[RMDB]
RNA sequence: GGGAACGACUCGAGUAGAGUCGAAAAGAACGUACGCUUUUUGGGAUGGGUUUUUUUUGCGUACGGAAACGCAUGCUUCGCGUAUGACACCCAUCCCAGUCAUAUGCGUUAAUUAAUUGCAUGCGGAGGCAUGGAUCCAGUUCGCUGGAUCCAUGCCAAAAGAAACAACAACAACAAC
Reactivity to 2A3 in 0.01 (KOAc 150mM, MgCl2 10mM, bicine 150mM(pH8.5), 24C), signal-to-noise 1, nucleotides 027 to 126: g120a000a010c090g000u010a000c000g000c000u030u030u060u280u090g000g000g000a020u000g030g120g040u170u020u050u000u030u080u300u050g000c010g000u000a000c000g000g000a010a020a000c000g000c000a000u040g030c070u020u050c000g000c000g000u000a000u000g000a000c000a000c030c000c000a060u060c000c000c000a000g000u000c010a000u000a000u020g080c000g000u000u100a080a000u070u110a100a080u010u020g020c000a000u010g020c000g030g000a030